[RMDB]
RNA sequence: GGGAACGACUCGAGUAGAGUCGAAAACAGGACGUUAGCAUAGGUCCAUUUUACUAUGCAGAUUGCAUCGUCGGAGACGACGUAGAGACCGCAACAGCAGGGUCGAUGAACUGCUGAAUUACACCUCUUCUCAUAGCGAGGGAUCAAGCUAUGUACACGAGCGGAUAUUAUUCGUAAUAUCCGCUCGAAAAGAAACAACAACAACAAC
Reactivity to DMS in 0.01 (KOAc 150mM, MgCl2 10mM, bicine 150mM(pH8.5), 24C), signal-to-noise 1, nucleotides 027 to 156: c090a180g000g010a040c020g040u000u010a090g020c000a080u010a080g000g030u000c050c110a130u000u020u020u000a100c000u010a050u000g000c030a190g010a070u000u000g010c080a270u020c040g020u020c030g100g020a300g000a300c000g000a040c000g020u000a040g000a160g010a090c060c020g030c050a100a100c000a070g020c000a010g050g000g030u020c120g000a170u070g020a020a030c000u000g000c000u020g000a000a180u000u000a110c020a050c040c020u010c020u000u000c010u000c000a070u010a060g010c010g000a190g040g000g000a030u000c050a070a140g050c010u020a020u000g040u000a170c090a220
Reactivity to 2A3 in 0.01 (KOAc 150mM, MgCl2 10mM, bicine 150mM(pH8.5), 24C), signal-to-noise 2, nucleotides 027 to 156: c010a000g000g070a000c020g080u090u190a020g000c000a020u040a060g010g080u030c020c020a020u060u070u030u000a080c010u030a020u000g000c000a090g060a240u220u290g090c050a110u080c010g000u000c000g000g020a080g040a010c000g000a000c000g000u010a010g060a000g000a050c010c000g000c010a010a100c000a090g000c000a000g000g040g000u000c070g180a150u120g040a050a020c000u000g000c000u010g000a020a080u110u050a100c040a080c050c020u020c020u050u080c050u030c060a000u000a010g020c000g010a040g030g070g080a100u130c040a100a000g000c000u020a010u030g070u030a020c060a020